[RMDB]
RNA sequence: GGGAACGACUCGAGUAGAGUCGAAAACUCACUGCCGCUCUGAGCGCAGUUACUGGCCAGAUUAGCGCGAAAAUUAUCAUCGUUAUUAGUAGGUUAACUCUCAUUCUCUUCUCCUGUCUGCGUCACCGUAGGAUUCUACAUUCGUGUAGAAUCCUACAAAAGAAACAACAACAACAAC
Reactivity to 2A3 in 0.01 (KOAc 150mM, MgCl2 10mM, bicine 150mM(pH8.5), 24C), signal-to-noise 8, nucleotides 027 to 126: c000u000c010a020c020u040g070c070c050g050c040u070c120u190g150a070g040c070g010c040a000g010u000u020a090c070u050g030g000c010c010a030g010a160u090u120a040g010c060g000c020g080a030a030a040a050u190u120a100u110c060a030u050c030g060u040u070a080u080u060a080g100u020a040g050g070u060u060a050a040c010u010c000u010c050a060u080u020c040u010c000u080u010c010u010c000c000u040g040u040c010u030g040c020g040u030c030a040c090c040
Reactivity to DMS in 0.01 (KOAc 150mM, MgCl2 10mM, bicine 150mM(pH8.5), 24C), signal-to-noise 7, nucleotides 027 to 126: c010u000c030a110c060u000g010c070c060g030c030u010c130u010g010a140g020c040g020c020a020g010u000u000a060c130u000g000g010c030c030a090g000a100u000u000a070g010c050g030c060g000a070a070a100a070u000u000a080u000c090a070u000c060g010u000u000a070u000u000a070g000u010a080g010g000u000u010a060a090c090u000c020u000c050a100u000u000c030u000c030u010u000c020u000c020c020u000g000u000c050u000g000c100g010u000c050a090c130c110